[RMDB]
RNA sequence: GGGAACGACUCGAGUAGAGUCGAAAAUAUACGAUCUGGUGACCUAACACCCGCCCAUCACCACCGGACAGAUUCUGAACUUGUCCUGUGGUGUUUGGUGUGGUUUUGGGGUACGCAGCUAUGGCCGCAAACUGCACAAGUUCGCUUGUGCAGUUUGAAAAGAAACAACAACAACAAC
Reactivity to 2A3 in 0.01 (KOAc 150mM, MgCl2 10mM, bicine 150mM(pH8.5), 24C), signal-to-noise 1, nucleotides 027 to 126: u170a000u020a010c030g050a090u010c010u040g010g060u100g090a130c000c010u020a020a000c010a000c020c010c010g000c000c010c020a010u000c000a000c000c000a010c020c020g020g000a010c010a000g050a100u230u090c100u300g090a140a130c050u120u090g000u000c000c010u020g000u000g000g000u000g000u000u000u020g010g000u030g010u250g020g010u000u000u010u020g000g000g000g020u020a020c080g030c050a010g020c020u050a050u100g070g000c020c000g000
Reactivity to DMS in 0.01 (KOAc 150mM, MgCl2 10mM, bicine 150mM(pH8.5), 24C), signal-to-noise 2, nucleotides 027 to 126: u020a110u000a130c100g010a100u010c050u000g010g020u000g010a100c000c000u000a040a040c060a030c040c000c020g010c010c000c050a040u000c010a010c000c000a000c010c110g000g010a010c000a020g000a100u010u010c280u010g010a100a100c070u010u020g020u000c000c000u000g020u000g010g010u000g000u000u000u000g000g040u000g000u010g030g010u000u000u000u000g020g010g000g000u000a070c060g020c000a050g010c070u000a040u000g010g000c040c030g000

Source: RMDB library RFMREP, as collected in RNAgym. An RNA of 177 nucleotides, treated with 2A3 and DMS and read out base by base. DMS adducts were read by reverse transcription with MarathonRT. For 2A3 the reverse transcriptase was SuperScript II with manganese. Values cover nucleotides 27 to 126.